Background
Source: RMDB library OK3TST, as collected in RNAgym. This 207-nucleotide RNA was probed chemically with 2A3.
RNA sequence: GGGAACGACUCGAGUAGAGUCGAAAAUUUGGGUUAGGCUGACAAUCAGUUCCCUAGUGUUUACUCAGCACUCACUUCAUGACCCUUACUCUUAUUUGCUUAGCUUGGGGUUUCAUCAAAGCAGGCACAUUUGCAAGAAGUCAUCUACUUAUUGAACCUCAGAUCAAGUCUUCGGACUUGAUCUGAGAAAAGAAACAACAACAACAAC
Reactivity to 2A3 in 0.01 (KOAc 150mM, MgCl2 10mM, bicine 150mM(pH8.5), 24C), signal-to-noise 2, nucleotides 027 to 156: u040u000u130g000g000g010u020u010a070g030g070c060u030g060a060c070a080a030u120c050a100g040u070u080c020c010c010u050a090g000u000g100u110u070u040a120c070u000c050a010g040c010a060c030u050c000a020c000u080u080c070a040u150g060a130c000c000c000u020u020a080c030u020c030u030u150a050u160u100u050g050c040u040u110a060g010c010u060u020g000g000g000g070u030u190u100c030a100u050c020a070a060a000g040c030a020g020g000c010a010c020a080u060u060u180g070c040a080a070g000a030a020g060u000c020a090u000c010u040a060c050u120u220a120u160u120g060a020a040c000
2A3 adducts were read by reverse transcription with SuperScript II with manganese.